RNA sequence: GGGAACGACUCGAGUAGAGUCGAAAACUUGUGAGUCAGCUUCUUGACGGUAGAUAAGUGUGGAUGGAGUGAGAGGAGGAGUCCUGUGUAUGUCGUUGUCAACGUCGACCGAGCGUCCGUGCCAAGCAAUGCUUCAGUUCUUCGGAACUGAAGCAUUAAAAGAAACAACAACAACAAC
Reactivity to 2A3 in 0.01 (KOAc 150mM, MgCl2 10mM, bicine 150mM(pH8.5), 24C), signal-to-noise 2, nucleotides 027 to 126: c000u010u020g010u040g070a020g030u080c030a030g010c060u150u040c010u060u060g010a020c010g030g030u120a110g050a080u100a140a040g030u030g040u030g080g020a000u020g030g000a030g080u030g010a050g000a000g030g000a010g000g060a060g020u000c020c020u040g050u020g030u050a090u090g020u000c030g060u010u100g060u090c000a030a030c040g030u060c020g120a080c020c000g040a000g020c000g010u060c020c020g000u020g030c030c060a020a010g000c020
Reactivity to DMS in 0.01 (KOAc 150mM, MgCl2 10mM, bicine 150mM(pH8.5), 24C), signal-to-noise 2, nucleotides 027 to 126: c050u020u000g010u020g020a190g020u000c040a120g010c110u000u000c040u010u000g000a040c040g030g010u000a050g040a080u020a030a080g000u020g000u030g020g020a040u010g030g010a050g020u010g000a000g010a080g000g050a080g000g000a120g030u010c040c010u050g000u000g000u000a040u010g020u000c030g000u020u030g000u000c060a050a100c060g000u010c040g000a140c030c050g000a030g050c040g000u010c000c030g000u000g050c010c050a040a060g020c160